[RMDB]
RNA sequence: GGGAACGACUCGAGUAGAGUCGAAAAAAGGACUGGUUCGCCAGUCCUUAUUCAUUCGUACGGAACGAAGCGUAAGUCAUUACGCAAAUGACUAAAAGCGUAUACGAAAGGACUUCGGUCCUUUCAACUUUAUCGAUUGCUUCGGCAAUCGAUAAAGAAAAGAAACAACAACAACAAC
Reactivity to DMS in 0.01 (KOAc 150mM, MgCl2 10mM, bicine 150mM(pH8.5), 24C), signal-to-noise 2, nucleotides 027 to 126: a000a000g000g000a020c000u010g010g000u000u000c200g020c000c000a020g000u000c000c000u010u000a000u000u000c120a140u000u020c020g010u000a140c180g000g020a130a060c040g000a070a100g020c020g000u000a090a030g000u000c120a050u010u000a040c230g010c140a040a040a010u000g010a020c050u010a110a050a070a170g000c090g010u000a100u000a060c180g000a000a010a020g000g000a040c000u000u020c260g000g010u000c000c010u000u000u000c000a070a060
The data come from the RNA Mapping Database (RMDB), library M2PK50. The record gives the reactivity of an RNA of 177 nucleotides to DMS. DMS adducts were read by reverse transcription with MarathonRT. DMS (dimethyl sulfate) methylates the pairing face of unpaired adenines and cytosines. The RNA was probed in 150 mM KOAc, 10 mM MgCl2 and 150 mM bicine (pH 8.5) at 24 C.